[RMDB]
RNA sequence: GGGAACGACUCGAGUAGAGUCGAAAAUGAUAUCCAAGUCGUUCAGCAACUUAUCACCUUACUUGAUCUUGCUGAAUGGGAACCAGCUGAAUGGCUGGCUCCCUAUAUUGGUGAUAUUGCAGCGGAAAUACUUUUCCGGUUUCGACCGGAAAAGUAUAAAAGAAACAACAACAACAAC
Reactivity to DMS in 0.01 (KOAc 150mM, MgCl2 10mM, bicine 150mM(pH8.5), 24C), signal-to-noise 2, nucleotides 027 to 126: u020g010a130u000a080u000c000c010a050a060g020u020c060g000u000u010c030a140g010c000a030a060c170u000u000a020u000c000a010c060c030u000u000a110c230u020u000g000a150u030c130u000u010g030c070u010g000a060a080u020g010g010g000a000a010c000c020a020g000c000u010g010a120a050u000g010g000c000u000g000g010c010u000c000c000c000u000a010u000a060u000u000g020g020u000g010a000u000a010u000u010g010c080a100g010c140g000g000a090a130
Reactivity to 2A3 in 0.01 (KOAc 150mM, MgCl2 10mM, bicine 150mM(pH8.5), 24C), signal-to-noise 2, nucleotides 027 to 126: u100g010a030u140a120u100c000c010a040a000g180u030c010g000u030u060c050a040g030c000a000a030c060u070u050a010u030c000a000c000c000u040u210a110c010u170u230g080a050u170c080u130u210g150c110u080g090a080a040u050g020g000g010a000a040c010c000a000g050c000u140g170a290a150u290g030g000c030u000g010g040c000u010c000c010c000u040a020u020a010u050u040g010g000u000g030a010u010a030u010u020g020c010a020g000c060g080g040a100a140